[RMDB]
RNA sequence: GGGAACGACUCGAGUAGAGUCGAAAAGGGAGGCCGAGGUGGGCAGAUCACCUGAAGUUGGGAGUUCGAGAUCAGUGUGAUCAACAUUGAGAAACCCCGUCUCUACUAAAAAUACAAAAUUAGCUGGCCAUGGUGGCGCAUGCCUGUAACCCUAGCAGACGUAUACUGAUUUCGAUCAGUAUACGUCAAAAGAAACAACAACAACAAC
Reactivity to 2A3 in 0.01 (KOAc 150mM, MgCl2 10mM, bicine 150mM(pH8.5), 24C), signal-to-noise 3, nucleotides 027 to 156: g010g020g000a030g030g030c070c020g030a050g010g050u050g010g020g000c040a060g010a030u020c020a020c020c000u030g060a080a040g060u090u060g030g010g030a140g060u110u130c090g060a050g000a090u050c010a020g020u040g020u010g190a020u070c020a040a050c020a090u100u220g060a050g020a080a050a030c010c010c000c000g040u020c010u000c000u040a110c020u060a010a050a010a020a040u120a050c080a050a100a040a050u100u070a060g040c050u040g030g000c030c000a000u050g020g000u020g020g000c030g000c060a040u050g020c020c020u040g040u050a060a060c000c000c000u010a040g030c020a010
Reactivity to DMS in 0.01 (KOAc 150mM, MgCl2 10mM, bicine 150mM(pH8.5), 24C), signal-to-noise 1, nucleotides 027 to 156: g010g040g020a100g020g010c000c050g080a030g030g030u000g020g000g010c070a060g000a090u000c010a040c030c050u000g010a050a110g010u000u000g000g020g010a090g030u010u000c030g000a120g030a140u010c010a030g030u010g020u010g010a120u000c090a070a060c050a080u000u000g020a140g000a100a080a080c020c000c010c030g050u000c020u000c000u000a040c040u000a000a040a030a080a090u000a130c080a060a030a050a090u020u000a080g000c000u010g000g030c040c050a070u000g030g010u010g010g030c020g000c070a050u000g010c020c000u000g010u000a030a100c010c010c010u000a050g020c090a220
Structure probing data (2A3 and DMS) for a 207-nucleotide construct. For DMS, 2,949 sequencing reads were counted. The data come from the RNA Mapping Database (RMDB), library OK3TST. 2A3 adducts were read by reverse transcription with SuperScript II with manganese.